Chemical mapping of a 177-nucleotide RNA with 2A3 and DMS.
Values cover nucleotides 27 to 126.
It was measured as part of the RMDB library M2PK50.

RNA sequence: GGGAACGACUCGAGUAGAGUCGAAAACGGUCGAAAUUCGUUUCGACCGAAUUUGCUAGCUGAGCACAGCUGCAAUGCUAAGCUGAAAGCCAGCUGCAAGCGCGAGUUCGGCGUUCGCGCCGAACAAGAAUGAUUAUGAUUUCGAUCAUAAUCAUUCAAAAGAAACAACAACAACAAC
Reactivity to 2A3 in 0.01 (KOAc 150mM, MgCl2 10mM, bicine 150mM(pH8.5), 24C), signal-to-noise 9, nucleotides 027 to 126: c010g010g000u000c000g010a010a010a030u120u080c180g050u040u010u000c000g000a000c000c000g000a000a010u020u000u010g010c060u150a030g000c000u010g030a020g030c010a020c000a220g000c000u030g000c080a120a110u200g020c030u100a100a020g000c000u010g030a160a050a010g010c000c000a000g000c010u000g000c010a020a010g050c100g020c050g090a130g060u010u010c000g000g000c010g020u020u060c210g000c010g000c020c010g000a000a000c000a000a020
Reactivity to DMS in 0.01 (KOAc 150mM, MgCl2 10mM, bicine 150mM(pH8.5), 24C), signal-to-noise 9, nucleotides 027 to 126: c010g000g010u000c000g010a010a010a030u000u010c200g020u000u000u000c000g010a010c000c000g020a010a010u000u000u000g010c000u010a020g020c000u000g000a130g010c020a170c010a010g010c000u000g010c100a130a100u010g010c130u010a100a040g010c000u000g000a110a120a090g000c010c010a010g000c000u000g000c020a020a020g010c210g010c170g010a140g010u000u000c010g000g000c000g020u000u010c190g020c010g000c000c000g000a010a000c010a080a070